[RMDB]
RNA sequence: GGGAACGACUCGAGUAGAGUCGAAAAGGACUCAUUCCUGCGGUUAUGAUUAUGUCUACAACCCUUUCUUUGUCGAUGUUCAACAGUGGGGUUAUGUAGGCAAUCUUGCUACUAAUCACGAUCGUUACCACUAAUGUAUCUUCGGAUACAUUAGUGGAAAAGAAACAACAACAACAAC
Reactivity to 2A3 in 0.01 (KOAc 150mM, MgCl2 10mM, bicine 150mM(pH8.5), 24C), signal-to-noise 6, nucleotides 027 to 126: g060g020a060c030u030c100a070u050u010c000c010u020g010c020g010g010u030u030a020u040g020a010u020u040a050u110g000u000c000u010a000c010a030a050c010c000c000u050u260u110c010u060u060u030g030u020c060g210a220u190g140u270u110c010a020a020c010a070g000u010g010g010g010g020u050u030a080u120g000u000a000g000g000c000a000a000u020c020u030u110g070c020u040a060c020u020a020a030u010c020a010c050g010a020u010c010g020u020u050a070
Reactivity to DMS in 0.01 (KOAc 150mM, MgCl2 10mM, bicine 150mM(pH8.5), 24C), signal-to-noise 5, nucleotides 027 to 126: g010g000a080c170u010c150a260u000u000c010c010u000g010c020g020g000u000u000a060u010g000a010u000u000a040u000g020u000c000u010a020c020a030a060c010c000c000u000u010u000c030u010u000u010g010u010c080g000a130u010g020u010u000c040a030a010c130a030g010u010g000g000g000g010u000u000a040u000g030u000a010g010g010c010a020a040u000c110u010u000g000c130u010a100c220u000a020a020u000c030a030c030g010a010u000c010g000u000u000a140